[RMDB]
RNA sequence: GGGAACGACUCGAGUAGAGUCGAAAACAGGAUGUUGGUUUAAGCCUCUCCCAAUUUUCUAGUAACCUCACUGGGCUAGACGGGGCUCAAUAUACCUCUUCACCAAUGGCAUGGCUUCUGAUCACAUCUCCUAUACUAUUUUCGAAUAGUAUAGGAGAAAAGAAACAACAACAACAAC
Reactivity to 2A3 in 0.01 (KOAc 150mM, MgCl2 10mM, bicine 150mM(pH8.5), 24C), signal-to-noise 9, nucleotides 027 to 126: c040a010g040g010a080u070g030u130u060g060g070u040u110u170a060a010g010c000c010u020c010u040c010c010c040a020a050u110u080u060u020c010u010a030g030u040a130a120c000c000u050c030a120c160u120g000g030g000c010u010a010g020a030c050g030g010g010g000c020u020c040a060a020u080a020u070a190c010c010u020c010u060u060c040a070c080c020a030a070u080g020g000c030a030u030g030g000c000u060u020c030u050g080a080u070c030a030c010a120u000
Reactivity to DMS in 0.01 (KOAc 150mM, MgCl2 10mM, bicine 150mM(pH8.5), 24C), signal-to-noise 6, nucleotides 027 to 126: c130a080g020g010a050u010g010u000u020g010g000u010u010u010a140a140g000c010c020u000c100u010c030c010c020a090a070u000u010u020u020c020u010a060g000u000a080a130c040c020u010c130a070c110u010g010g000g000c050u000a030g010a070c300g000g000g010g000c040u000c050a040a040u000a070u010a080c030c030u000c030u000u000c050a090c010c030a040a080u010g020g020c020a050u020g000g010c020u000u010c040u000g000a080u010c070a060c150a110u010